[RMDB]
RNA sequence: GGGAACGACUCGAGUAGAGUCGAAAAUUUGGAUAACAUACGAUGGCGAGAUACCAAUCUGGGAAGGAGGUGACAUGUUGGUUGUGAAUGAUCAUACCAAAUUACUGAAUAAUAUCCGCCUAGCUAGAAAGAGAUCCUAUUUCGAUAGGAUCUCUUUAAAAGAAACAACAACAACAAC
Reactivity to 2A3 in 0.01 (KOAc 150mM, MgCl2 10mM, bicine 150mM(pH8.5), 24C), signal-to-noise 2, nucleotides 027 to 126: u060u040u110g070g010a060u040a260a000c030a040u150a070c030g050a030u120g000g020c030g080a210g000a060u030a040c020c030a020a070u050c040u100g000g060g110a020a020g010g010a010g000g010u030g030a020c030a140u060g090u130u030g080g000u050u160g060u020g070a080a060u140g040a110u010c020a020u050a040c000c010a000a000a050u050u040a040c000u030g020a000a030u100a060a020u020a020u010c000c000g000c000c000u030a020g010c020u040a050g220
Reactivity to DMS in 0.01 (KOAc 150mM, MgCl2 10mM, bicine 150mM(pH8.5), 24C), signal-to-noise 4, nucleotides 027 to 126: u010u010u010g010g000a120u010a090a140c100a110u000a080c080g010a090u000g020g010c020g000a110g010a050u000a050c060c040a110a130u010c050u000g020g030g010a060a040g000g010a300g020g000u000g000a040c150a040u010g010u010u000g010g020u000u000g040u020g030a100a070u010g010a050u000c030a040u000a100c010c010a010a100a110u000u010a070c070u000g010a070a040u000a120a130u000a050u000c020c020g010c010c010u000a130g000c120u000a080g010
Structure probing data (2A3 and DMS) for a 177-nucleotide construct. The RNA was probed in 150 mM KOAc, 10 mM MgCl2 and 150 mM bicine (pH 8.5) at 24 C. 2A3 adducts were read by reverse transcription with SuperScript II with manganese. DMS adducts were read by reverse transcription with MarathonRT.